[RMDB]
RNA sequence: GGGAACGACUCGAGUAGAGUCGAAAACUCCAUUGCUUCGGCAAUGGAGAAACAGGACGUGAGACCGAAACGGAGGUAGGUCCAAGUACCUUCUCACAAAAAAAACGCUUAGGUUCGCCUAAGCGAAGACUAUAUCAGCCUUCGGGCUGAUAUAGUCAAAAGAAACAACAACAACAAC
Reactivity to DMS in 0.01 (KOAc 150mM, MgCl2 10mM, bicine 150mM(pH8.5), 24C), signal-to-noise 1, nucleotides 027 to 126: c000u000c000c000a010u000u040g000c000u000u020c220g030g000c000a000a030u010g000g010a040g000a010a050a060c280a020g020g020a060c030g000u000g000a140g010a030c010c000g000a130a170a200c140g030g010a040g000g000u000a180g010g000u000c010c040a140a090g000u000a010c010c000u000u000c010u000c000a070c070a020a000a000a050a090a040a070a180c000g000c010u000u000a010g010g020u000u000c300g040c000c010u000a000a000g040c010g030a000a020
Reactivity to 2A3 in 0.01 (KOAc 150mM, MgCl2 10mM, bicine 150mM(pH8.5), 24C), signal-to-noise 2, nucleotides 027 to 126: c010u000c000c000a010u000u000g000c000u050u040c250g150g000c000a000a010u000g020g000a010g030a020a000a000c040a010g000g030a010c040g030u050g020a230g000a080c030c010g070a140a110a050c140g230g130a140g070g010u040a020g020g000u000c010c010a030a050g030u240a300c000c020u060u000c020u020c010a060c090a000a030a060a000a010a000a010a000c010g000c000u000u020a010g000g030u070u020c250g060c050c000u000a020a000g000c000g000a010a000
Structure probing data (DMS and 2A3) for a 177-nucleotide construct.
The 2A3 profile rests on 1,853 reads.
DMS adducts were read by reverse transcription with MarathonRT.
The DMS profile rests on 802 reads.
The RNA was probed in 150 mM KOAc, 10 mM MgCl2 and 150 mM bicine (pH 8.5) at 24 C.